[RMDB]
The record gives the reactivity of an RNA of 207 nucleotides to 2A3 and DMS. DMS adducts were read by reverse transcription with MarathonRT. The RNA was probed in 150 mM KOAc, 10 mM MgCl2 and 150 mM bicine (pH 8.5) at 24 C. Reactivities are given for positions 27 through 156.
RNA sequence: GGGAACGACUCGAGUAGAGUCGAAAAGAUCUGCGCCGAUCCGAAACGCUAGCAAACAGCCCGCAUCAUGUCGUCUCCUAACUUCGACGUGGUAAAAUACUGAGCUUAUGCGAGUAAGCCUGUUAGCAAUAGAUCAGAACGUUCGCGUUCUGAUCAAGAAAUAUAAAUAGUUCGCUAUUUAUAUUUCAAAAGAAACAACAACAACAAC
Reactivity to 2A3 in 0.01 (KOAc 150mM, MgCl2 10mM, bicine 150mM(pH8.5), 24C), signal-to-noise 6, nucleotides 027 to 156: g030a040u030c030u080g030c040g010c020c030g030a080u040c030c040g050a060a060a020c040g010c050u050a020g000c040a070a040a110c030a070g040c020c010c010g050c030a030u030c010a010u010g010u020c010g030u010c050u090c100c070u110a140a170c050u090u060c020g010a010c010g000u020g010g020u080a030a070a050a040u140a060c060u050g020a010g030c000u030u020a010u070g080c040g020a030g060u020a020a010g010c010c020u030g040u060u040a030g020c030a080a150u040a190g010a010u000c000a000g000a000a000c000g010u040u040c170g010c010g110u000u000c010u000g000a000u000c000a000a000
Reactivity to DMS in 0.01 (KOAc 150mM, MgCl2 10mM, bicine 150mM(pH8.5), 24C), signal-to-noise 2, nucleotides 027 to 156: g000a050u000c010u020g010c040g040c040c040g000a080u000c020c030g010a110a090a100c080g020c040u000a010g020c030a050a060a080c050a260g010c030c030c030g010c100a070u000c020a050u000g010u020c010g020u010c070u000c070c030u020a100a100c090u010u000c020g000a050c020g060u000g010g010u000a020a070a110a170u010a080c060u030g010a140g040c000u000u000a090u000g020c110g000a170g010u010a070a120g000c040c040u000g020u010u010a080g020c030a040a110u010a130g010a030u000c000a020g010a020a000c000g020u000u010c300g050c010g020u010u010c010u000g020a000u010c000a010a100